RNA sequence: GGGAACGACUCGAGUAGAGUCGAAAAGCAACGCAAAGCCGCGGCAAGUGGAGUUAGCGAGAAGAGACUAGGCUUUGAUUUCUUCAAGUGAAGCGGUCACCAAUCAGGUGUGGUAGUUACCGUAAAAAUAACCGCUCUUUGUUCGCAAAGAGCGGAAGAUGCAGAAAUAGUUCGCUAUUUCUGCAUCAAAAGAAACAACAACAACAAC
Reactivity to 2A3 in 0.01 (KOAc 150mM, MgCl2 10mM, bicine 150mM(pH8.5), 24C), signal-to-noise 4, nucleotides 027 to 156: g020c040a040a030c070g020c050a080a060a000g010c020c020g010c020g030g030c080a110a050g040u070g050g050a100g030u110u100a030g020c030g050a050g010a080a020g040a000g010a010c040u040a050g020g100c030u050u070u060g090a130u050u110u040c010u050u030c050a140a000g020u040g140a090a010g020c000g010g000u020c010a010c030c000a020a110u160c050a060g100g030u070g010u050g100g030u050a060g030u040u090a030c030c000g010u060a040a080a020a000a000u150a070a050c000c000g000c010u000c000u000u000u000g030u030u040c070g010c100a010a000a000g000a000g000c000g000g010a000a010
Reactivity to DMS in 0.01 (KOAc 150mM, MgCl2 10mM, bicine 150mM(pH8.5), 24C), signal-to-noise 2, nucleotides 027 to 156: g030c020a050a040c030g030c000a040a100a120g000c000c030g050c030g000g010c060a030a130g030u000g020g010a090g020u000u000a170g010c040g010a180g010a060a040g000a070g000a060c090u000a070g020g010c050u000u010u000g010a100u000u000u010c020u010u010c020a040a250g000u000g010a110a220g030c040g000g000u010c040a090c020c000a040a070u000c100a080g010g010u000g000u010g010g020u000a040g030u000u000a050c020c010g000u000a020a040a100a080a090u010a110a180c000c010g030c010u000c000u000u000u010g010u010u000c280g010c020a030a020a010g020a010g020c000g010g020a000a020